[RMDB]
RNA sequence: GGGAACGACUCGAGUAGAGUCGAAAAACACCAGAGUGCCCUGGUCAGGCUUGGCUCAUUCAUUAGGCACAAUGUGGGCAGUGCAGGGGACCCUCCAUACUGUAAAGCCACAUGAGAAGGUUUUAACUCCUUUUAAAAUUAGAAAAAUAAUGGAAUACCUAGUAGCCCUAUUCGUAGGGCUACUAGGAAAAGAAACAACAACAACAAC
Reactivity to 2A3 in 0.01 (KOAc 150mM, MgCl2 10mM, bicine 150mM(pH8.5), 24C), signal-to-noise 1, nucleotides 027 to 156: a000c040a040c000c060a060g000a000g070u000g010c000c000c000u000g000g000u000c030a040g010g010c070u060u070g000g040c010u010c190a070u210u130c000a000u250u000a090g000g000c030a000c060a000a010u010g000u030g000g050g030c030a090g070u030g110c060a040g040g040g090g020a190c050c030c000u090c060c000a100u120a190c000u000g090u120a000a160a000g070c000c000a010c000a060u010g030a000g040a070a000g010g010u000u000u260u060a000a040c010u100c000c000u000u250u090u300a010a060a000a010u120u110a010g100a030a230a030a030a030u300a130a030u130g000g090a140a020u160a090